[RMDB]
RNA sequence: GGGAACGACUCGAGUAGAGUCGAAAAAGUAUCUAAUUCGUUAGAUACUCGGGGACGGGUGAGGCGGCCGUGUGGGCAGACAGUGCUCCAGCCGCGCGCGCGAAUUUCGCCUAUUCGUAGGCGAAAAUAUGCCAUGAUGUUUCGACAUCAUGGCAUAAAAAGAAACAACAACAACAAC
Reactivity to DMS in 0.01 (KOAc 150mM, MgCl2 10mM, bicine 150mM(pH8.5), 24C), signal-to-noise 1, nucleotides 027 to 126: a000g010u000a010u000c000u000a000a040u000u020c140g030u010u000a000g000a010u000a000c010u020c060g020g020g030g010a220c080g000g010g040u000g010a070g030g010c030g020g000c020c070g020u020g020u000g020g000g040c010a080g010a100c290a120g030u000g030c060u010c010c020a110g000c020c000g000c000g000c040g010c060g020c030g010a050a150u000u000u010c000g010c010c010u000a040u010u010c210g020u000a010g010g000c000g020a000a010a030a120
An RNA of 177 nucleotides, treated with DMS and read out base by base. The data come from the RNA Mapping Database (RMDB), library M2PK50. High DMS reactivity at an A or C suggests that its Watson-Crick edge is free. The DMS profile rests on 1,239 reads. DMS adducts were read by reverse transcription with MarathonRT. Values cover nucleotides 27 to 126.